RNA sequence: GGGAACGACUCGAGUAGAGUCGAAAAUUCAUGAGCGCCCCAAUAGCCUGUUGCCAGACUAUAUCGUUGAAGGAACACCCACUGGCGAACUGAUGACGAGGAAACUCGUUAUCGACCUGCGAAAUCAAGAUGUCAUGUUAUUCGUAACAUGACAUCUAAAAGAAACAACAACAACAAC
Reactivity to 2A3 in 0.01 (KOAc 150mM, MgCl2 10mM, bicine 150mM(pH8.5), 24C), signal-to-noise 2, nucleotides 027 to 126: u000u000c010a000u110g020a030g060c030g090c010c000c000c000a000a060u040a050g010c000c020u070g050u170u090g070c070c000a010g020a080c030u080a070u000a050u280c060g050u070u120g060a090a030g050g020a050a000c000a030c050c010c020a020c060u040g060g000c010g010a030a010c030u070g000a020u010g000a000c010g000a020g030g010a000a030a070c000u010c000g030u000u000a000u000c000g010a010c010c030u090g000c020g060a070a070a010u110c020a010
Reactivity to DMS in 0.01 (KOAc 150mM, MgCl2 10mM, bicine 150mM(pH8.5), 24C), signal-to-noise 4, nucleotides 027 to 126: u000u000c040a060u010g010a100g000c150g020c040c010c010c040a120a060u010a050g020c010c020u010g000u000u000g010c130c030a070g020a080c050u010a040u000a080u000c050g020u000u010g020a130a080g000g010a090a070c130a090c020c010c020a090c090u000g030g010c010g020a060a050c180u010g010a010u000g010a000c000g000a010g000g000a130a100a190c000u000c010g010u000u000a000u000c000g000a070c080c040u000g000c070g000a070a080a080u010c150a080